Chemical mapping of a 177-nucleotide RNA with 2A3 and DMS. 2A3 adducts were read by reverse transcription with SuperScript II with manganese. The RNA was probed in 150 mM KOAc, 10 mM MgCl2 and 150 mM bicine (pH 8.5) at 24 C. DMS adducts were read by reverse transcription with MarathonRT.

RNA sequence: GGGAACGACUCGAGUAGAGUCGAAAAGCCUGUUCACAGCCGGUUUCCGGGCCCGUCAUCCGGGUGGGUUGCGAGAGGCGGCAUGCAAAUGCCGUCCCAGAUGAAUGGCUGCCACGUUCCGGGUCAAUCUUAUAAUAUCCUUCGGGAUAUUAUAAGAAAAAGAAACAACAACAACAAC
Reactivity to 2A3 in 0.01 (KOAc 150mM, MgCl2 10mM, bicine 150mM(pH8.5), 24C), signal-to-noise 1, nucleotides 027 to 126: g020c000c040u060g060u070u060c070a030c020a070g010c060c040g080g010u070u160u090c030c020g030g010g020c000c000c000g060u020c020a070u030c050c000g000g000g040u050g030g020g000u070u140g100c060g070a120g000a040g050g040c050g000g050c020a000u050g000c010a130a070a090u020g020c000c010g030u070c020c010c030a090g040a080u160g080a110a040u030g040g000c020u050g060c010c000a070c040g000u060u030c010c000g010g050g000u000c010a020a090
Reactivity to DMS in 0.01 (KOAc 150mM, MgCl2 10mM, bicine 150mM(pH8.5), 24C), signal-to-noise 2, nucleotides 027 to 126: g000c000c020u000g030u000u000c050a080c050a160g010c040c060g020g010u010u010u010c040c020g040g010g000c020c010c070g000u010c100a040u010c150c000g030g010g020u010g020g020g000u010u010g000c070g020a110g000a060g020g000c000g000g000c020a000u000g000c230a070a130a010u000g000c000c000g000u010c010c020c020a040g010a170u010g020a070a080u000g000g000c040u000g000c000c030a090c040g010u000u000c030c020g010g000g020u000c100a090a150